[RMDB]
RNA sequence: GGGAACGACUCGAGUAGAGUCGAAAACUGCAGGUCAACGGAUCGUCUUCAGAUCAGCUAUUGCAGAAGAAAGGUCAGCCAAGCGCUCUGGGCCUGGUCGACUGUAUAUAGGAGCUUCUGAUUUCAACCAGAAGCUAACUCUCUCCGAAACAAUGAGAGGCCAUAAAAUGUUCGCAUUUUAUGGCCUAAAAGAAACAACAACAACAAC
Reactivity to 2A3 in 0.01 (KOAc 150mM, MgCl2 10mM, bicine 150mM(pH8.5), 24C), signal-to-noise 1, nucleotides 027 to 156: c020u060g000c010a020g010g000u100c050a150a030c100g150g020a030u010c010g140u040c080u300u090c070a010g000a030u020c030a050g010c000u030a020u170u090g000c000a000g000a060a000g040a020a100a000g030g030u000c000a000g030c010c020a070a000g010c070g020c060u210c260u260g080g010g000c000c000u050g000g150u000c000g000a000c050u000g110u200a030u000a000u050a070g070g000a000g060c010u000u000c000u000g010a100u130u110u300c030a020a010c060c040a000g000a000a000g000c000u000a050a000c000u010c000u000c000u010c020c020g160a190a040a110c020a010a040u120g000a010g020